The record gives the reactivity of an RNA of 207 nucleotides to 2A3. It was measured as part of the RMDB library OK3TST.
RNA sequence: GGGAACGACUCGAGUAGAGUCGAAAAUUCAACGGCGCGUGCGCAAUUUGCGCCGCCAGGUGGCCCGUGCGCGCAGAGUGGGUCGGCGGGCAGCGGCCAUUGCGGCAGAUGCCGCUUUGGCCGUGUCAGCACCGGGACGGCGUCGUAACGUGUAUUGCGUUACGAGAGACUUCGGUCUCUCGUAACGAAAAGAAACAACAACAACAAC
Reactivity to 2A3 in 0.01 (KOAc 150mM, MgCl2 10mM, bicine 150mM(pH8.5), 24C), signal-to-noise 1, nucleotides 027 to 156: u100u050c000a030a060c020g000g000c010g000c030g020u200g000c000g000c080a080a160u140u060u260g000c010g010c000c000g000c020c000a010g000g000u000g010g020c000c030c040g000u160g300c080g000c010g040c040a040g050a010g190u200g000g010g050u090c000g030g010c000g000g000g000c000a000g000c000g010g000c030c000a000u000u000g000c000g080g000c000a000g090a300u300g080c000c000g000c000u000u000u000g000g000c000c000g010u000g000u000c000a000g080c000a000c000c000g000g010g000a090c000g090g060c000g020u050c010g000u260a080a000c000g010u300g000u300a040u300u290g030